[RMDB]
RNA sequence: GGGAACGACUCGAGUAGAGUCGAAAAACGCGGAGUACGCUCCGCGUCAACACUUCUUUCGACCCGCUAACCGAGACCUAUGGGUCGUUAAAUUACGUCUCUAUCUUACUCACAUAACAUCGCACAAAAAACGUGGUUCGGUUCGCCGAACCACGAACUAUAGUUCACAGUUCGCUGUGAACUAUAGAAAAGAAACAACAACAACAAC
Reactivity to DMS in 0.01 (KOAc 150mM, MgCl2 10mM, bicine 150mM(pH8.5), 24C), signal-to-noise 2, nucleotides 027 to 156: a000c010g040c000g060g010a050g000u000a110c280g050c030u000c000c000g030c010g070u000c010a080a100c080a060c080u010u000c050u000u010u000c020g000a040c000c020c000g000c160u000a090a130c050c060g010a100g020a060c050c060u010a070u000g040g000g010u000c000g050u000u000a010a050a130u010u010a060c060g010u000c010u000c020u000a090u000c090u000u000a060c030u000c040a060c060a120u000a040a070c040a070u000c050g000c050a150c070a010a060a060a080a080a110c000g030u000g030g040u000u000c000g040g030u020u010c290g020c000c010g000a010a000c000c000a020c000g050a000a040
Reactivity to 2A3 in 0.01 (KOAc 150mM, MgCl2 10mM, bicine 150mM(pH8.5), 24C), signal-to-noise 6, nucleotides 027 to 156: a000c010g000c020g000g000a010g010u050a020c170g040c080u000c000c000g010c010g000u000c000a030a010c020a000c050u120u170c030u050u220u140c010g000a000c000c040c010g020c240u210a010a010c010c030g020a010g020a020c010c000u030a070u190g000g000g000u000c000g030u020u020a000a020a020u150u060a010c030g010u010c010u000c000u030a120u070c030u070u140a110c050u090c100a070c020a150u190a210a050c030a120u150c100g040c120a060c110a070a090a040a050a070a040c030g000u000g010g020u000u000c010g000g070u040u070c170g030c050c010g000a000a000c000c000a000c010g000a000a000
This 207-nucleotide RNA was probed chemically with DMS and 2A3. The DMS profile rests on 3,619 reads. The RNA was probed in 150 mM KOAc, 10 mM MgCl2 and 150 mM bicine (pH 8.5) at 24 C. For DMS the reverse transcriptase was MarathonRT.